[RMDB]
RNA sequence: GGGAACGACUCGAGUAGAGUCGAAAACUGCCGCCGGGACGCAGUGAUCCUCGCAGGGUCGCACGGUCGCCUCGGGUCGGCCUCGGGUCGGCUCGACCUGCGAGGGGAGCGAGUGGCGAGCCCGACCAAAACUUUCUCGCCUUCGGGCGAGAAAGAAGAUAGGUCCAUUCUUCGGAAUGGACCUAUCAAAAGAAACAACAACAACAAC
Reactivity to 2A3 in 0.01 (KOAc 150mM, MgCl2 10mM, bicine 150mM(pH8.5), 24C), signal-to-noise 1, nucleotides 027 to 156: c040u050g010c020c010g040c020c000g060g010g100a080c040g040c030a120g150u000g020a000u010c000c000u000c000g020c010a030g020g080g120u190c030g000c060a100c090g030g040u000c010g020c040c000u010c000g000g000g030u060c020g010g050c000c000u080c060g140g000g000u000c000g000g000c040u020c040g030a030c000c000u000g000c000g000a040g000g000g010g000a010g000c010g010a120g080u090g030g000c010g010a050g030c030c020c020g020a040c000c030a000a010a000a150c000u000u000u000c000u010c000g020c030c030u040u060c170g110g000g020c010g000a000g000a000a000a000g010a000a000